[RMDB]
RNA sequence: GGGAACGACUCGAGUAGAGUCGAAAAGUACAGAAUUCAGUGUAGGCCGGGAGUUGAGACUGGUGUGUGUUUAGUGGAUUAUCUGAUCAGCACAUGUGUGACAGUGUUGAUCACAAGUCAUUGCCAGGAGGCUAUUCUCAUUCGUGAGAAUAGCCUCAAAAGAAACAACAACAACAAC
Reactivity to 2A3 in 0.01 (KOAc 150mM, MgCl2 10mM, bicine 150mM(pH8.5), 24C), signal-to-noise 3, nucleotides 027 to 126: g120u090a050c030a050g060a040a110u080u060c020a070g030u020g060u130a050g010g010c070c040g030g070g020a060g020u060u080g040a020g000a020c000u010g050g020u000g000u020g010u000g000u000u020u150a230g000u070g060g010a100u040u030a030u230c030u020g020a010u000c010a000g000c000a010c070a150u030g070u030g140u140g180a100c040a030g000u000g010u030u000g020a000u000c000a020c000a000a030g040u050c010a020u040u090g010c000c000a030g080
Reactivity to DMS in 0.01 (KOAc 150mM, MgCl2 10mM, bicine 150mM(pH8.5), 24C), signal-to-noise 2, nucleotides 027 to 126: g000u040a080c050a070g010a080a090u010u000c060a030g020u010g000u000a090g020g010c040c050g040g000g020a100g020u000u000g000a040g010a160c010u000g040g010u000g030u010g020u010g000u000u000u010a060g030u000g010g000a050u010u010a120u020c160u030g000a000u000c010a020g010c000a000c000a050u010g020u000g010u020g010a070c070a080g000u010g020u000u000g000a000u000c000a030c180a020a000g010u000c050a060u020u000g000c030c060a080g000
Chemical mapping of a 177-nucleotide RNA with 2A3 and DMS. The RNA was probed in 150 mM KOAc, 10 mM MgCl2 and 150 mM bicine (pH 8.5) at 24 C. DMS adducts were read by reverse transcription with MarathonRT. DMS (dimethyl sulfate) methylates the pairing face of unpaired adenines and cytosines.